[RMDB]
RNA sequence: GGGAACGACUCGAGUAGAGUCGAAAAGGAAAGAUAAUGAUUAAGGAAGACCCAUGACCUAGAGGCAAAAUCAACAUAUAUGGUUCUGUAUUUCUAACAUUGGAAUCAGUUGAGAAAUAUGAAAAUGUCCUACGUAAGGGUUCGCCCUUACGUAGGAAAAAGAAACAACAACAACAAC
Reactivity to DMS in 0.01 (KOAc 150mM, MgCl2 10mM, bicine 150mM(pH8.5), 24C), signal-to-noise 2, nucleotides 027 to 126: g020g040a060a090a080g000a100u010a090a100u010g010a080u010u010a080a050g000g000a100a110g010a090c020c000c000a070u010g010a150c080c030u000a050g020a040g000g000c110a040a090a120a130u000c070a020a060c110a120u000a110u030a130u000g010g020u000u000c020u000g000u000a000u000u000u000c060u040a030a070c140a100u000u000g020g030a020a020u010c030a020g000u000u030g000a030g000a030a050a060u000a040u000g000a050a050a040a110u010g010